[RMDB]
RNA sequence: GGGAACGACUCGAGUAGAGUCGAAAAUCCUAAGUCCAAAGACAUGAAGGAGUAUGUACUCGAAGAACAUAGUCGGAAACGACUAUGGGAGAGUAUGAAACUUCAACAGCUUUGGAUAUGGAAAAGCAGAGCUCAACGUUCGCGUUGAGCUCUGCAACUCUCGUUUUCUGUUCGCAGAAAACGAGAGAAAAGAAACAACAACAACAAC
Reactivity to 2A3 in 0.01 (KOAc 150mM, MgCl2 10mM, bicine 150mM(pH8.5), 24C), signal-to-noise 1, nucleotides 027 to 156: u010c000c000u010a020a040g030u000c000c000a010a010a020g010a170c040a120u070g000a000a010g020g000a010g010u000a030u300g010u000a020c000u020c030g100a290a040g010a040a030c000a000u000a000g000u010c010g040g000a080a120a050c010g000a000c010u000a000u010g000g010g000a070g000a000g000u000a040u050g020a050a030a020c000u010u000c000a070a050c050a030g010c010u030u020u000g000g010a000u010a020u010g020g030a060a090a060a050g020c000a000g000a010g020c010u010c020a000a000c010g140u230u190c300g030c020g130u030u040g020a000g010c020u000c000u000g000c000a000a000

The record gives the reactivity of an RNA of 207 nucleotides to 2A3. The reactions ran in a buffer of 150 mM KOAc, 10 mM MgCl2 and 150 mM bicine (pH 8.5), at 24 C.